Chemical mapping of a 177-nucleotide RNA with DMS and 2A3. 2A3 adducts were read by reverse transcription with SuperScript II with manganese. Conditions: 150 mM KOAc, 10 mM MgCl2 and 150 mM bicine (pH 8.5), 24 C. In probing experiments dimethyl sulfate is read out at A N1 and C N3, which are open when not base-paired. The 2A3 profile rests on 1,278 reads.
RNA sequence: GGGAACGACUCGAGUAGAGUCGAAAAAGUCUUAGGCAAAACCUAUCUGUAAGGGCAUUGACAAGCCUAGGUAGGUGCGUAACCUUAAAAUCCGUGAAGCCGUCCGUGUCUGAUUAAGGUACUGAUUGCUGAACUUUUGAUUCGUCAAAAGUUCAGCAAAAGAAACAACAACAACAAC
Reactivity to DMS in 0.01 (KOAc 150mM, MgCl2 10mM, bicine 150mM(pH8.5), 24C), signal-to-noise 1, nucleotides 027 to 126: a090g000u010c020u000u000a040g020g020c070a040a000a110a050c010c000u000a000u000c000u000g010u070a100a070g010g040g020c030a090u020u000g000a230c300a030a110g050c000c000u000a000g040g050u000a010g020g000u000g030c090g000u000a090a200c080c000u010u020a010a050a100a010u000c010c020g020u010g010a080a080g000c080c010g020u000c010c030g000u020g000u000c010u010g000a120u000u010a130a070g000g000u000a140c010u000g020a090u000u020
Reactivity to 2A3 in 0.01 (KOAc 150mM, MgCl2 10mM, bicine 150mM(pH8.5), 24C), signal-to-noise 3, nucleotides 027 to 126: a000g090u090c020u090u110a030g010g000c000a000a030a100a170c000c010u010a010u030c000u060g190u290a140a140g020g040g000c020a040u040u160g040a120c040a100a050g000c000c000u020a000g000g000u000a000g000g010u020g000c000g040u080a020a030c000c000u040u000a010a130a000a100u050c030c030g080u030g050a060a020g030c030c030g000u000c000c000g040u010g000u010c030u020g070a120u050u120a020a050g070g000u010a030c000u050g040a150u020u040